Source: RMDB library RNAMAK, as collected in RNAgym. Structure probing data (2A3 and DMS) for a 207-nucleotide construct.
[RMDB]
RNA sequence: GGGAACGACUCGAGUAGAGUCGAAAACGCUGUUCGCAGCGAGUAACGGGGUCCGACGACGAUCGCACCAAGCCGAAGAACAUACUGAAGCCUCCACGGUAUGGGAGGCUUGUGCGGGAGUCGGACGGAGGCACCCAUUCGGUGGUUUCGACCACAAAGUUAAUGUAGUAUUCGUACUACAUUAACUAAAAGAAACAACAACAACAAC
Reactivity to 2A3 in 0.01 (KOAc 150mM, MgCl2 10mM, bicine 150mM(pH8.5), 24C), signal-to-noise 7, nucleotides 027 to 156: c010g000c010u020g030u100u090c300g010c120a010g000c020g020a040g120u100a110a110c120g020g000g050g060u050c010c000g010a000c000g030a040c010g000a000u000c000g000c010a020c060c190a040a000g000c000c000g100a110a010g010a000a000c000a010u020a000c000u020g060a230a040g010c010c000u000c000c000a000c000g000g000u000a000u000g010g000g010a010g000g000c000u000u000g000u000g000c000g000g000g000a000g000u000c000g000g010a010c010g000g000a000g000g000c010a060c010c010c000a060u220u210c120g060g000u020g010g000u040u090u130c170g100a060c010c010a020c040a050a110
Reactivity to DMS in 0.01 (KOAc 150mM, MgCl2 10mM, bicine 150mM(pH8.5), 24C), signal-to-noise 3, nucleotides 027 to 156: c060g030c000u010g040u000u000c170g070c050a030g000c000g010a190g070u000a050a080c050g020g000g010g010u000c040c000g030a080c030g010a060c150g010a200u000c010g000c020a020c110c070a030a070g030c020c010g020a080a160g010a200a260c020a060u000a070c020u000g010a050a120g000c000c000u000c010c040a300c050g000g010u000a050u000g000g000g000a070g030g030c000u000u000g000u000g010c020g000g000g020a220g030u000c030g000g000a070c030g010g020a040g020g000c000a100c010c000c000a170u010u000c090g000g010u000g000g020u010u000u000c160g030a070c020c010a020c020a050a150